RNA sequence: GGGAACGACUCGAGUAGAGUCGAAAAGGGGUAGUUCCGGAAUUCGACAGGUUAUUACAAGCAUGGAUUGCGUUCCCGUUUGUCGGGUUAAAGACUGCAGAUAUAACUGCAAAAAAUAAUGAACCAUCUUACGCAUUAGCUGCCUAAUCGCAGUAGCCAUGUAUACUAGCUUCGGCUAGUAUACAUGAAAAGAAACAACAACAACAAC
Reactivity to 2A3 in 0.01 (KOAc 150mM, MgCl2 10mM, bicine 150mM(pH8.5), 24C), signal-to-noise 6, nucleotides 027 to 156: g020g000g010g020u080a030g010u110u040c030c010g010g080a050a090u050u040c020g020a020c010a050g070g060u130u110a120u130u160a110c070a140a050g040c050a070u120g090g060a100u080u140g020c010g010u010u000c000c000c010g010u050u070u060g030u020c000g020g000g000u020u070a050a080a010g030a030c050u020g000c010a000g070a010u130a010u050a240a070c000u000g000c000a000a000a030a000a020a070u190a020a050u080g050a030a030c040c010a050u030c040u090u110a070c040g000c010a060u100u060a030g010c010u010g000c000c020u080a080a040u140c050g000c020a000g020u010a010g020c010
Reactivity to DMS in 0.01 (KOAc 150mM, MgCl2 10mM, bicine 150mM(pH8.5), 24C), signal-to-noise 3, nucleotides 027 to 156: g020g000g010g020u000a060g010u010u020c000c030g000g030a100a100u000u000c040g010a060c050a040g000g010u000u000a050u010u000a040c030a080a110g010c000a050u020g010g020a140u000u010g010c030g000u000u000c000c020c020g020u000u000u000g020u010c020g000g000g020u000u000a050a070a160g010a140c140u000g000c020a040g020a220u000a130u000a130a170c040u000g000c020a000a010a070a030a040a140u020a070a130u000g000a060a060c020c020a130u000c020u010u010a080c030g030c030a100u000u000a130g020c000u000g000c000c010u000a080a120u010c070g000c010a030g010u000a080g020c100